[RMDB]
RNA sequence: GGGAACGACUCGAGUAGAGUCGAAAAAGUGCACUCGGUACGCCUAGUGCACAUUCCAGGACAUACUGCUGAGGAUGUCAAAAAUGCAGUUGGAGUCCUCAACUGGAUAGGCUACGGCCUAUCCAGAAAAAGACUUGGUUGUUCGCAACCAAGUCAAGAUACUACGAUACUUCGGUAUCGUAGUAUCAAAAGAAACAACAACAACAAC
Reactivity to 2A3 in 0.01 (KOAc 150mM, MgCl2 10mM, bicine 150mM(pH8.5), 24C), signal-to-noise 2, nucleotides 027 to 156: a010g000u000g000c010a010c000u030c080g020g010u030a030c180g080c010c000u000a000g010u000g020c010a000c000a010u030u030c000c010a010g000g000a010c040a050u170a030c010u010g050c030u060g000a000g140g130a300u230g260u300c140a070a070a010a020a000u170g000c000a010g010u050u040g080g060a100g040u020c000c020u080c040a050a120c000u000g000g000a000u000a010g000g000c040u030a020c290g060g000c020c010u000a000u020c000c000a000g000a000a000a000a000a000g000a000c000u000u000g010g000u010u000g030u020u010c200g030c120a000a000c010c000a000a000g000u000c010a000a000
Reactivity to DMS in 0.01 (KOAc 150mM, MgCl2 10mM, bicine 150mM(pH8.5), 24C), signal-to-noise 2, nucleotides 027 to 156: a180g000u000g020c010a000c010u000c110g010g060u000a090c300g080c000c000u000a030g010u000g010c000a020c000a040u000u000c040c020a110g000g010a070c050a050u000a030c010u010g040c040u010g010a130g040g010a070u000g040u000c050a010a060a070a180a110u000g030c060a090g020u020u000g010g020a230g030u000c010c030u000c040a080a230c000u000g000g000a020u000a030g010g010c020u000a100c300g080g000c010c000u000a000u000c000c000a020g000a010a020a070a150a130g010a010c010u000u000g000g020u000u000g000u000u050c280g000c010a040a030c000c000a010a010g000u010c000a020a040